The record gives the reactivity of an RNA of 177 nucleotides to DMS and 2A3. Values cover nucleotides 27 to 126. For DMS the reverse transcriptase was MarathonRT. The 2A3 profile rests on 568 reads. Source: RMDB library OK1LIB, as collected in RNAgym. Conditions: 150 mM KOAc, 10 mM MgCl2 and 150 mM bicine (pH 8.5), 24 C.

[RMDB]
RNA sequence: GGGAACGACUCGAGUAGAGUCGAAAAUCACAAAGCGGAUUUAGCUCGGUUGGGAGAGGUCCAGACCGAUGAUCUGGUUAUCCUGUGUCCGAGACACAGAAUUCGCACCAUAAACAACGGGAGAUUCACGCCGCUAGUAUUUCGAUACUAGCGGCGUAAAAGAAACAACAACAACAAC
Reactivity to DMS in 0.01 (KOAc 150mM, MgCl2 10mM, bicine 150mM(pH8.5), 24C), signal-to-noise 1, nucleotides 027 to 126: u000c090a150c250a040a040a080g000c010g030g000a000u000u000u000a240g050c030u000c000g010g120u000u010g000g000g000a060g000a100g000g010u030c000c000a000g090a020c000c300g010a300u000g050a130u000c000u000g070g000u020u000a170u000c030c000u000g000u120g010u000c000c010g000a090g010a000c080a000c120a240g000a000a000u000u000c000g010c000a100c070c080a130u030a030a080a270c070a010a050c000g090g120g000a060g020a240u030u000c060
Reactivity to 2A3 in 0.01 (KOAc 150mM, MgCl2 10mM, bicine 150mM(pH8.5), 24C), signal-to-noise 1, nucleotides 027 to 126: u090c000a020c010a030a170a000g000c010g000g010a000u030u030u030a050g020c010u000c010g000g030u100u200g030g020g000a000g010a000g000g120u040c000c000a000g000a000c020c240g080a110u050g080a100u060c000u020g000g000u050u000a000u020c000c000u100g000u050g140u100c030c030g000a000g130a000c000a000c000a010g020a020a000u010u000c030g000c000a090c000c000a160u300a210a150a060c070a020a020c000g020g070g000a190g020a070u140u040c020